[RMDB]
RNA sequence: GGGAACGACUCGAGUAGAGUCGAAAAGAUAUGGACCUCGAACUACGACGAAAUCCUUCGUUGAAAUCGGAAACGAUGGAGAAGGAUAGUCGCGAGGUCCUAAGUCAAACAAGGGUUCGCCCUUGAACAUAUAACUCGUCUUCGGACGAGUUAUAUGAAAAGAAACAACAACAACAAC
Reactivity to 2A3 in 0.01 (KOAc 150mM, MgCl2 10mM, bicine 150mM(pH8.5), 24C), signal-to-noise 4, nucleotides 027 to 126: g040a020u050a050u110g010g010a000c010c010u020c010g020a160a120c100u220a070c280g010a000c020g050a300a100a100u010c020c010u010u000c020g180u180u060g070a120a120a000u000c010g000g050a040a040a030c000g000a000u010g030g020a080g000a020a000g020g000a000u010a030g000u010c000g000c000g010a010g020g020u000c000c000u000a000a000g010u000c010a010a040a110c000a010a040g000g010g070u070u140c180g280c000c000c020u000u010g020a040a010
Reactivity to DMS in 0.01 (KOAc 150mM, MgCl2 10mM, bicine 150mM(pH8.5), 24C), signal-to-noise 6, nucleotides 027 to 126: g010a040u000a300u000g000g000a010c000c000u000c010g000a110a090c160u010a300c020g010a020c010g010a110a120a090u000c000c000u000u000c010g020u000u020g000a100a120a010u000c010g010g000a090a100a140c000g020a010u000g010g010a110g000a010a010g000g000a010u000a080g010u000c010g000c000g010a000g010g010u000c000c000u000a000a070g000u000c040a110a120a250c010a000a020g000g000g020u000u000c220g020c000c000c000u000u000g000a090a150
Annotation: An RNA of 177 nucleotides, treated with 2A3 and DMS and read out base by base. The reactions ran in a buffer of 150 mM KOAc, 10 mM MgCl2 and 150 mM bicine (pH 8.5), at 24 C.